Structure probing data (2A3) for a 207-nucleotide construct. Values are in units of 0.01, from 0 to 300, in steps of 10. The reactions ran in a buffer of 150 mM KOAc, 10 mM MgCl2 and 150 mM bicine (pH 8.5), at 24 C.
RNA sequence: GGGAACGACUCGAGUAGAGUCGAAAAAGAAUGCACCACAGCGUAAAAUCAUCUGAUUGGGUGAGUUGGUCGCACCGCCAUUUGACGAACGAACGCCACGCCUAAGCCGUCUUUGUGCAUUAAGUGGAAAAGGAGCCCCAGUUCGCUGGGGCUCCAACGGAGUUACACGAUUCGUCGUGUAACUCCGAAAAGAAACAACAACAACAAC
Reactivity to 2A3 in 0.01 (KOAc 150mM, MgCl2 10mM, bicine 150mM(pH8.5), 24C), signal-to-noise 1, nucleotides 027 to 156: a010g050a050a000u030g010c000a000c020c000a000c050a000g000c030g000u040a000a040a170a090u050c040a020u000c030u110g170a300u180u200g000g050g010u010g090a210g000u030u100g060g010u090c050g020c010a040c060c020g020c000c010a100u060u060u170g040a030c100g040a070a010c010g010a040a000c000g010c020c020a020c000g000c000c020u040a030a000g070c090c000g080u060c090u030u040u080g040u010g000c000a010u040u040a180a040g110u130g070g100a080a110a080a080g000g010a000g060c030c000c000c000a000g000u000u100c040g050c060u000g000g000g000g000c000u000c000c010a000a000
It was measured as part of the RMDB library M2RFPK.